This 177-nucleotide RNA was probed chemically with DMS and 2A3. High 2A3 reactivity points to a flexible backbone, as in loops and unpaired stretches. For 2A3 the reverse transcriptase was SuperScript II with manganese. DMS adducts were read by reverse transcription with MarathonRT. The RNA was probed in 150 mM KOAc, 10 mM MgCl2 and 150 mM bicine (pH 8.5) at 24 C.

[RMDB]
RNA sequence: GGGAACGACUCGAGUAGAGUCGAAAAUACCGCGUUUUCGAGGUUUUUCGUCGUGUCAACUUGCGAAGGGAAUUACGGGUUCUUGAUGAGCAUUGGUGAUAGGAGGUGUGGGCUUGGUUAGUAGAGGCAUCUAGAACAACUUCGGUUGUUCUAGAUGAAAAGAAACAACAACAACAAC
Reactivity to DMS in 0.01 (KOAc 150mM, MgCl2 10mM, bicine 150mM(pH8.5), 24C), signal-to-noise 5, nucleotides 027 to 126: u010a110c010c010g020c080g010u000u000u000u010c040g020a090g010g010u000u000u000u000u000c040g020u000c050g010u010g010u000c090a050a080c070u000u000g020c050g010a100a120g010g000g000a080a070u000u010a080c150g010g000g010u000u000c030u010u000g010a090u000g000a100g010c060a070u000u000g020g020u010g000a070u000a070g010g000a060g000g010u000g020u000g000g010g020c050u000u000g010g010u000u000a070g010u000a070g000a100g010g010
Reactivity to 2A3 in 0.01 (KOAc 150mM, MgCl2 10mM, bicine 150mM(pH8.5), 24C), signal-to-noise 2, nucleotides 027 to 126: u150a000c000c010g010c040g000u000u050u020u140c040g040a070g040g000u000u010u010u040u120c050g020u010c030g000u000g010u030c050a080a040c050u070u090g020c020g050a030a010g040g020g030a060a060u100u060a110c080g110g060g000u040u010c020u060u080g060a080u060g010a000g030c040a050u040u120g060g000u050g040a080u080a090g000g060a060g000g020u100g030u090g030g020g020c020u030u020g050g000u060u040a040g010u050a030g030a020g060g040